[RMDB]
RNA sequence: GGGAACGACUCGAGUAGAGUCGAAAACUGCAGCAGGAGAGUUCAAGCUUCCCCUUGUGGAUAAGACUGUUGAGGGUUUCAGUGGCUAUGCUGUGAGGUACCUGAAGCCGGAUGUCACCCAGUGCUGGUGAGACAUGCAUUUCGAUGCAUGUCUCACAAAAGAAACAACAACAACAAC
Reactivity to DMS in 0.01 (KOAc 150mM, MgCl2 10mM, bicine 150mM(pH8.5), 24C), signal-to-noise 1, nucleotides 027 to 126: c010u000g000c000a030g000c000a030g020g010a000g000a130g020u000u000c060a040a100g000c070u010u040c040c000c000c050u030u020g020u000g020g030a080u000a040a050g010a060c000u020g000u000u030g000a260g000g000g000u000u000u020c040a000g020u050g000g000c040u000a040u040g000c060u000g000u000g000a090g000g000u000a050c030c020u000g000a060a030g000c020c000g000g000a060u010g020u000c010a060c040c050c010a090g000u000g000c050u000g000
Reactivity to 2A3 in 0.01 (KOAc 150mM, MgCl2 10mM, bicine 150mM(pH8.5), 24C), signal-to-noise 3, nucleotides 027 to 126: c000u050g000c000a010g050c010a010g010g130a080g040a040g050u160u110c050a050a020g010c000u040u050c000c000c000c000u030u150g050u100g110g000a040u070a100a100g040a030c000u040g040u090u020g060a070g020g030g000u050u070u020c050a040g050u100g060g020c010u050a050u210g020c040u020g010u030g100a060g020g010u080a250c000c000u030g020a000a030g020c020c010g000g030a100u120g020u030c000a040c000c000c010a080g090u060g100c050u070g030

Description
This 177-nucleotide RNA was probed chemically with DMS and 2A3. For DMS, 2,094 sequencing reads were counted. Conditions: 150 mM KOAc, 10 mM MgCl2 and 150 mM bicine (pH 8.5), 24 C.